[RMDB]
RNA sequence: GGGAACGACUCGAGUAGAGUCGAAAAGCGCCACUUUGGUGGGUGGGUGAUGGCGUGCCUUUUGAAGAAUGAGCCUGCGAGUUAGCGGCAUGUCGCGAGGUUAACCCGUGUGGGGUAGCCGUAGCGAUAUUCAUGCCUCCUUCGGGAGGCAUGAAUAAAAAGAAACAACAACAACAAC
Reactivity to 2A3 in 0.01 (KOAc 150mM, MgCl2 10mM, bicine 150mM(pH8.5), 24C), signal-to-noise 6, nucleotides 027 to 126: g010c020g010c010c010a060c040u090u090u120g080g010u130g020g060g120u260g030g000g000u040g060a100u060g010g000c030g030u100g070c030c060u120u160u070u130g150a090a060g060a070a030u180g000a010g020c020c020u050g010c110g000a110g080u110u240a010g010c020g010g000c010a020u100g020u000c000g000c010g000a030g000g010u020u070a120a110c000c010c010g070u160g160u180g100g000g000g020u000a010g000c010c000g020u030a010g000c000g000a000
Reactivity to DMS in 0.01 (KOAc 150mM, MgCl2 10mM, bicine 150mM(pH8.5), 24C), signal-to-noise 5, nucleotides 027 to 126: g010c050g000c030c000a040c120u010u020u000g000g030u030g000g010g000u020g000g020g000u020g010a090u020g000g000c040g040u010g020c070c020u010u000u010u020g010a100a090g000a090a060u010g020a120g020c000c020u030g030c030g000a150g000u020u040a110g000c040g000g020c060a070u020g020u000c000g000c010g000a180g000g010u000u000a070a060c000c000c000g010u050g030u040g020g000g000g020u010a020g010c000c010g000u030a230g010c010g000a020
Chemical mapping of a 177-nucleotide RNA with 2A3 and DMS. For 2A3 the reverse transcriptase was SuperScript II with manganese. The RNA was probed in 150 mM KOAc, 10 mM MgCl2 and 150 mM bicine (pH 8.5) at 24 C. Reactivities are given for positions 27 through 126. Reactivities are rounded to 0.1 and cut off at 0 and 3.